[RMDB]
RNA sequence: GGGAACGACUCGAGUAGAGUCGAAAACUCAACAAAAUCAAUGACUGGUCACUUACUUGGUGCAACAGGUGGAAUUGAAGCAAUCUUCUCAGCGCUUUCAAUUAAAGACUCUAAAGUCGCACCGACAAGCGAUGAGGCUGUUCGCAGCCUCAUCGCUAAAAGAAACAACAACAACAAC
Reactivity to 2A3 in 0.01 (KOAc 150mM, MgCl2 10mM, bicine 150mM(pH8.5), 24C), signal-to-noise 1, nucleotides 027 to 126: c120u110c060a060a020c120a010a160a010a100u160c020a010a190u000g160a130c060u030g020g000u000c020a000c000u000u020a050c000u100u200g090g000u020g050c140a200a050c020a050g060g000u000g110g090a090a040u030u000g000a020a020g000c000a000a050u000c000u000u060c080u030c000a070g010c000g000c040u040u220u290c000a000a030u010u000a060a050a070g000a050c000u020c050u110a040a230a000g000u080c000g110c000a000c000c000g000a020c000a000